[RMDB]
RNA sequence: GGGAACGACUCGAGUAGAGUCGAAAAUAGCACGGGAGUACAAAGGCCAAUGCAGCCUCAGGUUCACGUGCUUUUGAGAUGAUUAAGAAAUGCAAAGUUAGGCUGGGCAAGGUGGCUCAUGCCUAUGAUCGUAGCACUUGGGGAGAUCAAUCCUAGACGUCCAUACCAUAUUCGUAUGGUAUGGACGAAAAGAAACAACAACAACAAC
Reactivity to 2A3 in 0.01 (KOAc 150mM, MgCl2 10mM, bicine 150mM(pH8.5), 24C), signal-to-noise 6, nucleotides 027 to 156: u110a000g000c000a000c010g000g020g010a030g050u140a130c090a090a100a050g040g000c030c060a200a180u300g050c120a090g000c020c000u030c020a080g000g090u020u000c010a000c030g000u000g000c000u040u000u010u010g020a010g000a020u110g010a030u080u120a090a050g060a060a050a030u070g020c050a070a050a050g060u040u010a010g000g000c000u010g030g000g000c050a100a090g280g070u100g170g010c010u010c020a020u250g000c000c010u000a010u030g000a010u100c080g060u060a030g040c010a010c050u060u100g010g010g010g000a040g010a070u080c050a030a030u010c010c010u050a090g020a110
Reactivity to DMS in 0.01 (KOAc 150mM, MgCl2 10mM, bicine 150mM(pH8.5), 24C), signal-to-noise 2, nucleotides 027 to 156: u000a020g000c000a020c030g020g000g000a100g110u000a110c040a040a300a110g040g030c040c030a090a160u000g000c150a160g000c000c040u110c040a300g060g000u010u010c000a030c020g040u000g000c000u000u000u030u030g030a260g000a040u010g000a130u000u000a090a090g030a100a110a020u000g010c020a100a100a190g000u000u000a030g000g000c030u000g020g000g000c000a210a100g050g020u000g000g010c040u000c000a060u020g030c010c000u030a010u000g010a040u000c050g070u000a210g000c040a030c010u000u010g000g010g090g000a160g000a130u000c070a040a100u000c020c020u010a040g000a300